[RMDB]
RNA sequence: GGGAACGACUCGAGUAGAGUCGAAAAAAGUUCUUGAAGAACUCGACUGCAUCCGCAAUUACGGUUUCCUGUGACUGAUAGUAGCGCAGAGUUUCGGCAACAUCUUGCGCCAGGCCGUCAACGGUUAGCGAGUCGCUUAAAAGGAUCGCGUAAUCGCUCGUUCCUUUUAGUUCGCUAAAAGGAACGAAAAAGAAACAACAACAACAAC
Reactivity to 2A3 in 0.01 (KOAc 150mM, MgCl2 10mM, bicine 150mM(pH8.5), 24C), signal-to-noise 2, nucleotides 027 to 156: a000a000g040u040u020c060u090u070g130a170a050g020a030a010c020u010c030g110a090c030u050g000c010a010u060c010c010g000c040a030a030u040u050a020c000g030g060u000u220u010c000c010u040g050u070g090a050c000u050g090a140u060a150g130u100a000g020c000g000c010a000g020a010g030u020u050u190c100g080g000c030a030a010c010a130u040c040u170u170g000c010g000c000c000a010g020g000c000c010g030u120c050a260a240c020g000g020u040u040a010g000c000g030a020g040u000c030g020c070u130u110a040a130a020a000g060g000a020u080c060g000c010g090u010a040a100u010c030g050c040
Reactivity to DMS in 0.01 (KOAc 150mM, MgCl2 10mM, bicine 150mM(pH8.5), 24C), signal-to-noise 2, nucleotides 027 to 156: a030a050g010u000u000c030u000u000g010a190a140g010a010a030c020u000c030g000a140c090u000g010c030a210u000c020c020g030c040a100a110u000u000a040c080g000g000u000u000u000c010c000u030g040u000g010a100c040u000g000a160u000a110g000u010a060g010c020g040c000a030g000a050g020u000u000u000c100g040g000c070a090a070c070a080u000c030u000u000g020c030g070c020c000a120g000g010c000c000g040u010c060a090a030c020g000g030u000u000a060g030c020g010a040g010u010c010g020c090u010u000a020a070a100a180g020g020a030u000c040g000c010g010u020a060a080u000c030g010c040
Chemical mapping of a 207-nucleotide RNA with 2A3 and DMS. 2A3 adducts were read by reverse transcription with SuperScript II with manganese. Values are in units of 0.01, from 0 to 300, in steps of 10. DMS adducts were read by reverse transcription with MarathonRT. It was measured as part of the RMDB library OK3TST. The reactions ran in a buffer of 150 mM KOAc, 10 mM MgCl2 and 150 mM bicine (pH 8.5), at 24 C.